[RMDB]
Structure probing data (2A3) for a 177-nucleotide construct. Conditions: 150 mM KOAc, 10 mM MgCl2 and 150 mM bicine (pH 8.5), 24 C.
RNA sequence: GGGAACGACUCGAGUAGAGUCGAAAAGCGCUUAAAUUAAAUUUCCCUUGCUGAGCUCAUCUCAGCAAACAAUAACAAAUAACAAAUAAGAAGAGCAGGGAAGGCUGUUCUUAUUUGUUACAAUAAACACCAUCUAUGCUUUCGAGCAUAGAUGGUGAAAAGAAACAACAACAACAAC
Reactivity to 2A3 in 0.01 (KOAc 150mM, MgCl2 10mM, bicine 150mM(pH8.5), 24C), signal-to-noise 1, nucleotides 027 to 126: g080c030g000c160u150u170a070a080a120u200u220a110a060a110u090u130u010c000c000c000u000u020g000c010u010g010a020g000c080u070c200a180u050c040u000c010a000g000c000a000a000a000c010a020a020u280a080a030c070a050a080a020u030a010a010c000a000a010a000u000a000a000g000a000a000g010a000g010c070a050g120g040g120a110a070g170g000c030u070g180u050u000c000u030u010a000u000u000u000g000u020u000a020c000a000a080u230a020a070a000
Reactivities are rounded to 0.1 and cut off at 0 and 3. High 2A3 reactivity points to a flexible backbone, as in loops and unpaired stretches.